[RMDB]
RNA sequence: GGGAACGACUCGAGUAGAGUCGAAAACACAGCAAAAUAAUAAGCGUCUGUGCUAGUUAGUAAAUCUAAUGGUACGCCAAGUAAACCUACAAUAAUAUGCAAGUAUGGUCCUACUUCUGCAGGAAUCCGUUCUAGCCAUUUUCGAAUGGCUAGAACGAAAAGAAACAACAACAACAAC
Reactivity to DMS in 0.01 (KOAc 150mM, MgCl2 10mM, bicine 150mM(pH8.5), 24C), signal-to-noise 1, nucleotides 027 to 126: c050a090c050a050g030c090a060a030a060a030u000a130a090u000a020a080g000c210g020u000c060u000g050u000g030c020u000a180g000u020u000a000g000u000a030a050a110u010c000u000a000a040u050g000g020u000a070c040g030c020c120a060a060g030u020a060a120a080c000c010u010a020c050a110a100u000a020a050u000a070u010g000c120a000a020g010u000a020u000g000g000u000c070c050u000a070c060u000u000c050u000g020c000a050g000g030a110a090u000c050
Reactivity to 2A3 in 0.01 (KOAc 150mM, MgCl2 10mM, bicine 150mM(pH8.5), 24C), signal-to-noise 2, nucleotides 027 to 126: c010a010c000a010g040c000a030a090a070a050u250a170a070u180a140a050g010c030g130u070c050u040g020u000g000c030u010a060g070u120u060a020g030u040a040a120a270u080c010u000a020a020u060g020g000u010a010c040g070c080c000a000a000g040u040a150a040a000c000c030u090a030c070a020a030u200a190a070u140a120u270g110c050a060a130g010u050a080u140g020g030u010c010c000u010a030c020u050u060c010u050g010c020a020g000g090a030a030u000c040